[RMDB]
RNA sequence: GGGAACGACUCGAGUAGAGUCGAAAAAGUAUUUUUCACAAUUAGGCAUUAUUUCAGGACUAUCACUACAAAUGCAACCAUAUGGAGUAUUGAAUGCUAUUUGGUCGAAAAAUCAGGUAAACCCAGAUAUGAUUUAAUAGUUCGCUAUUAAAUCAUAAAAAGAAACAACAACAACAAC
Reactivity to DMS in 0.01 (KOAc 150mM, MgCl2 10mM, bicine 150mM(pH8.5), 24C), signal-to-noise 6, nucleotides 027 to 126: a110g000u010a020u000u000u000u000u000c010a060c010a010a040u000u000a090g010g010c020a030u010u010a070u010u000u010c080a070g000g010a130c120u000a060u010c080a040c100u000a100c180a060a060a060u000g010c120a070a100c120c060a090u000a130u000g010g010a070g010u000a050u010u000g010a050a030u000g000c010u000a050u000u000u000g000g000u010c130g010a010a020a010a020a020u000c030a080g020g020u010a050a070a150c010c010c010a110g010a200
Reactivity to 2A3 in 0.01 (KOAc 150mM, MgCl2 10mM, bicine 150mM(pH8.5), 24C), signal-to-noise 4, nucleotides 027 to 126: a000g060u080a020u000u010u000u020u040c010a000c020a010a040u060u030a150g080g010c020a020u040u040a060u100u190u080c030a050g040g050a080c080u070a110u200c060a030c140u140a050c090a040a120a040u130g030c030a050a090c040c010a040u060a110u300g040g010a020g050u050a060u080u100g130a060a030u020g000c020u010a040u040u020u020g070g010u060c050g020a000a000a020a000a000u030c020a010g050g020u050a050a040a020c010c000c010a000g020a030
The record gives the reactivity of an RNA of 177 nucleotides to DMS and 2A3. For 2A3, 4,337 sequencing reads were counted. The reactions ran in a buffer of 150 mM KOAc, 10 mM MgCl2 and 150 mM bicine (pH 8.5), at 24 C. DMS adducts were read by reverse transcription with MarathonRT. The data come from the RNA Mapping Database (RMDB), library OK2TST.